Conditions: 150 mM KOAc, 10 mM MgCl2 and 150 mM bicine (pH 8.5), 24 C. An RNA of 177 nucleotides, treated with DMS and read out base by base. In probing experiments dimethyl sulfate is read out at A N1 and C N3, which are open when not base-paired.
[RMDB]
RNA sequence: GGGAACGACUCGAGUAGAGUCGAAAAAGAGUGAAAAGAGGAGCCAGAAGGGUGAAAAUCUCCAGAACAGGAGCGUUGCAUUGACACAUCACCAUUGGUCAGUAGGGUUAACUUGGAUGUAGGCAGCGGCUAUGUGCGUUUUCGAACGCACAUAGCCAAAAGAAACAACAACAACAAC
Reactivity to DMS in 0.01 (KOAc 150mM, MgCl2 10mM, bicine 150mM(pH8.5), 24C), signal-to-noise 1, nucleotides 027 to 126: a030g000a060g000u000g000a110a130a120a120g010a200g010g010a180g010c050c030a020g040a110a080g020g000g030u000g040a040a060a080a060u000c060u010c000c010a100g000a050a130c150a120g010g000a050g000c120g040u000u000g040c050a010u000u000g000a170c060a110c130a130u000c060a060c030c080a170u000u010g020g000u010c010a020g010u000a060g010g000g030u010u000a010a080c160u010u000g030g000a020u010g010u010a050g030g030c090a040g000c210
For DMS, 633 sequencing reads were counted.